[RMDB]
An RNA of 177 nucleotides, treated with DMS and 2A3 and read out base by base.
High 2A3 reactivity points to a flexible backbone, as in loops and unpaired stretches.
The reactions ran in a buffer of 150 mM KOAc, 10 mM MgCl2 and 150 mM bicine (pH 8.5), at 24 C.
It was measured as part of the RMDB library OK2TST.
RNA sequence: GGGAACGACUCGAGUAGAGUCGAAAAUGAGGCCCUCGCCCUCGCCACGCGCACCGACGAAGCCUCGCGGGUGAGGCUCCAGGACCUCCAGGAGACCAUCCGCACACUCGACGCCCGCAUGCGUGCGCAGCACGGGUACCUUCGGGUACCCGUGCUGAAAAGAAACAACAACAACAAC
Reactivity to DMS in 0.01 (KOAc 150mM, MgCl2 10mM, bicine 150mM(pH8.5), 24C), signal-to-noise 2, nucleotides 027 to 126: u000g000a060g010g000c020c060c050u000c110g010c100c010c000u000c060g020c070c050a050c100g010c050g040c080a050c070c010g010a070c060g000a080a130g010c000c060u010c090g040c020g000g000g000u000g000a060g020g000c020u000c000c010a110g000g020a180c200c220u030c000c040a070g000g000a050g000a070c070c010a040u000c020c040g010c000a090c110a060c090u000c050g020a130c130g010c020c020c020g020c110a070u010g010c070g020u000g010c040g020
Reactivity to 2A3 in 0.01 (KOAc 150mM, MgCl2 10mM, bicine 150mM(pH8.5), 24C), signal-to-noise 1, nucleotides 027 to 126: u180g010a040g010g040c070c000c030u000c010g070c000c030c000u000c000g020c060c030a150c090g050c010g000c010a040c000c020g040a070c040g030a100a010g010c000c070u090c080g000c000g000g000g000u040g030a160g050g020c010u010c010c000a080g100g060a230c000c040u110c020c020a040g000g000a020g000a010c000c000a020u050c020c010g000c030a020c000a010c060u090c030g060a050c030g040c000c060c000g020c060a060u080g000c020g040u030g000c030g000